[RMDB]
RNA sequence: GGGAACGACUCGAGUAGAGUCGAAAAAAGGCCCUUGCCCAUGGAACCUCAUUGAACAAUCUACCACCCGGUGUUGUGAUAGUGGAGGUUGUUGCCACUAUGAUUGGAAGUUCCAUCCAACUGCCUGAUGUCAUGCUAUAUUCGUAUAGCAUGACAUAAAAGAAACAACAACAACAAC
Reactivity to 2A3 in 0.01 (KOAc 150mM, MgCl2 10mM, bicine 150mM(pH8.5), 24C), signal-to-noise 2, nucleotides 027 to 126: a000a000g050g000c020c000c000u000u030g040c000c010c000a040u040g000g000a010a020c000c000u030c020a040u030u130g010a030a010c020a030a050u050c030u110a130c020c040a060c020c010c020g050g060u110g080u130u100g020u050g030a060u050a040g040u000g020g050a070g060g000u000u020g000u000u050g010c020c010a020c020u050a030u110g080a150u040u100g060g010a030a020g030u030u000c010c000a000u070c020c030a020a050c030u060g010c000c020u050g040
Reactivity to DMS in 0.01 (KOAc 150mM, MgCl2 10mM, bicine 150mM(pH8.5), 24C), signal-to-noise 4, nucleotides 027 to 126: a080a060g000g020c030c040c050u000u010g020c020c050c060a060u010g010g010a030a020c020c040u000c040a160u000u010g020a100a160c030a020a030u010c030u010a100c060c020a090c120c100c150g020g010u010g010u010u000g000u000g010a070u000a020g000u000g000g000a110g010g000u010u000g010u000u010g000c000c000a030c030u000a030u010g000a100u010u000g000g000a040a060g010u010u000c020c020a070u000c140c030a050a070c100u000g000c020c030u010g010